The record gives the reactivity of an RNA of 177 nucleotides to DMS and 2A3. DMS adducts were read by reverse transcription with MarathonRT. Values cover nucleotides 27 to 126. For DMS, 3,041 sequencing reads were counted.
RNA sequence: GGGAACGACUCGAGUAGAGUCGAAAAUUUUUGCACAACUAAAACAGAGCUUGCCAUGUGUCAUGCCCAAGUUAACAAUCACUUUACUAUUGCCUUUCAGACUGUGGCUUAGGCCUAGAUUGCAAGGCUGGAGAGUUUAUUUCGAUAAACUCUCCAGAAAAGAAACAACAACAACAAC
Reactivity to DMS in 0.01 (KOAc 150mM, MgCl2 10mM, bicine 150mM(pH8.5), 24C), signal-to-noise 3, nucleotides 027 to 126: u000u000u000u000u000g030c080a060c070a090a090c070u010a060a060a090a080c130a080g000a070g020c040u000u000g000c040c040a090u000g020u000g020u000c060a070u000g010c030c000c020a060a060g020u010u010a060a070c170a070a080u000c090a040c080u000u000u000a070c130u000a070u010u000g020c020c020u000u010u000c040a040g010a040c020u000g020u000g010g010c010u000u000a070g020g000c000c020u000a020g000a070u000u010g000c050a020a010g010g010
Reactivity to 2A3 in 0.01 (KOAc 150mM, MgCl2 10mM, bicine 150mM(pH8.5), 24C), signal-to-noise 3, nucleotides 027 to 126: u050u040u010u070u100g020c040a050c020a080a070c080u090a040a100a110a020c030a050g090a020g050c000u020u040g000c020c010a060u050g020u010g030u070c000a040u090g000c010c010c000a030a020g020u030u100a070a050c050a060a070u140c040a070c110u090u130u200a040c030u110a060u130u200g030c030c020u020u020u010c010a020g030a070c000u040g060u080g300g010c020u030u080a100g040g040c000c000u020a030g020a070u000u040g030c020a020a000g050g000
Overview: The data come from the RNA Mapping Database (RMDB), library OK2TST. 2A3 adducts were read by reverse transcription with SuperScript II with manganese.